[RMDB]
RNA sequence: GGGAACGACUCGAGUAGAGUCGAAAAGUACUACCGUUCGCGGUAGUACAAAUAAUCCAGCCUGGAAAGGCUGGAGCCAAAACUAUGCUAAAGGCACCAUAGAAAGAGCAGAGUUCGCUCUGCUCAAGAUCUAAUUCCACUUCGGUGGAAUUAGAUCAAAAGAAACAACAACAACAAC
Reactivity to DMS in 0.01 (KOAc 150mM, MgCl2 10mM, bicine 150mM(pH8.5), 24C), signal-to-noise 2, nucleotides 027 to 126: g000u000a010c000u010a010c000c010g030u010u020c300g010c020g010g000u000a000g000u000a010c000a060a050a080u010a150a060u010c000c000a010g010c000c000u000g000g010a110a080a010g010g020c000u000g000g000a000g000c020c040a040a040a060a150c080u000a040u000g010c050u010a060a130a110g000g010c050a060c300c020a130u000a010g010a130a130a180g010a000g030c000a000g000a030g010u000u000c230g020c010u000c000u000g000c010u000c000a070a050
Reactivity to 2A3 in 0.01 (KOAc 150mM, MgCl2 10mM, bicine 150mM(pH8.5), 24C), signal-to-noise 2, nucleotides 027 to 126: g010u000a000c000u000a000c010c010g030u010u060c300g000c030g120g010u000a000g000u010a000c010a010a020a010u060a000a000u000c000c010a000g050c000c000u080g060g110a170a070a000g020g000c000u000g020g000a010g040c000c000a020a090a050a080c060u050a040u150g040c010u190a250a040a030g100g020c050a020c060c000a060u030a090g120a040a200a000g000a010g000c010a000g000a000g030u020u060c150g020c090u000c030u020g000c010u010c000a010a000